[RMDB]
RNA sequence: GGGAACGACUCGAGUAGAGUCGAAAAUACAGAGUCUGAUCUUUCGCUGUUUGGUGUCUGCCGGCUGCACUACUCCCGCUGCCAGUCUACCAACUGCUUCUGGAAGCAGGGAAUUCUGCCAACCUACGUCCAAUUGAUAAUUCGUUAUCAAUUGGACAAAAGAAACAACAACAACAAC
Reactivity to DMS in 0.01 (KOAc 150mM, MgCl2 10mM, bicine 150mM(pH8.5), 24C), signal-to-noise 7, nucleotides 027 to 126: u010a150c070a080g000a070g000u010c020u010g010a110u000c030u000u000u000c060g010c040u000g010u000u000u000g020g010u000g010u000c030u000g030c110c040g010g000c040u010g020c050a060c060u010a090c120u000c030c040c090g010c060u000g010c130c020a030g000u000c050u010a100c090c060a070a100c110u000g000c070u000u000c100u000g000g010a060a030g010c030a060g010g000g000a060a100u000u000c020u000g010c030c060a060a120c050c030u000a100c240
Reactivity to 2A3 in 0.01 (KOAc 150mM, MgCl2 10mM, bicine 150mM(pH8.5), 24C), signal-to-noise 5, nucleotides 027 to 126: u160a010c030a010g040a010g070u000c020u050g050a120u030c020u020u090u080c040g000c040u030g040u160u080u080g090g000u030g020u020c030u010g040c030c020g050g030c040u080g030c040a020c090u140a110c030u090c040c010c010g010c010u010g030c020c000a010g010u000c040u090a060c010c010a060a060c030u040g020c010u100u070c050u110g090g070a040a010g000c020a040g020g000g040a010a040u080u030c010u020g010c020c010a060a080c030c020u060a060c070

An RNA of 177 nucleotides, treated with DMS and 2A3 and read out base by base. For DMS, 10,149 sequencing reads were counted. Reactivities are rounded to 0.1 and cut off at 0 and 3. The reactions ran in a buffer of 150 mM KOAc, 10 mM MgCl2 and 150 mM bicine (pH 8.5), at 24 C.